RNA sequence: GGGAACGACUCGAGUAGAGUCGAAAACCGUAGGCCAGUGAUCACUUCUUGGAUUUAUAUGGCGUAGUGGUUCGAAAGAGCCAUGAGGCCAUAUUGUCAGAAGUGCGUACUGGCCUAAACGGAAAGCUGAAACGCGUGUUCGCACGCGUUUCAGCAACAAAUUGACGUUGUUCGCAACGUCAAUUUGAAAAGAAACAACAACAACAAC
Reactivity to 2A3 in 0.01 (KOAc 150mM, MgCl2 10mM, bicine 150mM(pH8.5), 24C), signal-to-noise 1, nucleotides 027 to 156: c000c000g000u020a010g000g000c000c000a000g000u020g040a080u070c010a010c010u010u020c020u050u200g090g010a050u110u300u050a020u020a000u010g020g000c000g000u000a010g000u000g000g000u000u020c040g020a120a090a080g000a040g000c050c010a050u060g000a000g000g020c000c000a000u000a000u000u000g000u010c000a010g000a000a000g000u000g000c000g000u000a000c000u010g010g050c010c000u000a000a000a000c010g030g020a220a010a030g010c000u000g000a000a000a000c000g000c000g000u010g020u070u110c230g010c110a000c010g000c000g010u000u000u000c000a000g010c000a000a000
Reactivity to DMS in 0.01 (KOAc 150mM, MgCl2 10mM, bicine 150mM(pH8.5), 24C), signal-to-noise 2, nucleotides 027 to 156: c010c000g020u000a010g000g020c010c000a030g000u000g000a130u000c010a050c000u000u000c020u030u000g050g010a030u010u010u000a030u000a010u000g010g010c000g050u000a300g040u000g000g050u000u000c000g020a240a140a300g000a020g000c020c000a010u010g000a300g010g000c000c000a000u000a000u000u000g010u000c000a080g000a040a010g010u040g010c140g070u010a030c040u020g000g010c000c010u000a000a000a020c020g000g000a120a090a120g030c010u000g000a000a020a020c000g010c000g000u010g020u000u020c300g060c020a000c000g070c010g000u000u000u020c010a040g050c020a020a070

Conditions: 150 mM KOAc, 10 mM MgCl2 and 150 mM bicine (pH 8.5), 24 C. This 207-nucleotide RNA was probed chemically with 2A3 and DMS. The DMS profile rests on 3,627 reads. For 2A3, 1,851 sequencing reads were counted.